[RMDB]
This 177-nucleotide RNA was probed chemically with DMS and 2A3. Reactivities are given for positions 27 through 126. The reactions ran in a buffer of 150 mM KOAc, 10 mM MgCl2 and 150 mM bicine (pH 8.5), at 24 C.

RNA sequence: GGGAACGACUCGAGUAGAGUCGAAAAAAGUAUUGCUAUAGUUAAGGUUGCGCUUGCCUAUUUAGGCAUACUUCUCAGGAUGGCGCGUUGCAGUCCAACAAGAUCCAGGGACUGUACAGAAUUUUCCUGUAACGGAUUUUUUCGAAAAUCCGUUACAAAAAGAAACAACAACAACAAC
Reactivity to DMS in 0.01 (KOAc 150mM, MgCl2 10mM, bicine 150mM(pH8.5), 24C), signal-to-noise 4, nucleotides 027 to 126: a040a010g000u010a000u000u020g030c010u000a070u010a030g000u000u020a060a020g010g010u010u030g000c170g020c010u000u010g010c050c000u000a080u020u030u030a040g010g000c030a000u010a000c010u000u000c010u000c020a120g000g000a040u010g000g020c060g000c100g010u020u010g010c000a010g000u000c000c020a080a100c220a100a100g000a090u020c110c110a130g000g010g000a010c020u000g020u000a020c110a120g020a070a060u000u020u010u000c040c050
Reactivity to 2A3 in 0.01 (KOAc 150mM, MgCl2 10mM, bicine 150mM(pH8.5), 24C), signal-to-noise 5, nucleotides 027 to 126: a000a000g100u100a080u120u150g000c040u060a030u090a150g090u110u120a200a010g020g020u060u060g020c060g000c020u060u090g000c000c000u060a130u080u110u120a050g010g000c010a000u010a000c000u030u020c040u010c020a030g060g070a090u070g040g020c010g010c040g050u040u060g000c000a010g000u000c010c000a060a020c020a210a080g070a140u080c080c040a050g030g000g010a000c000u010g000u020a030c020a010g160a120a130u040u020u050u070c000c020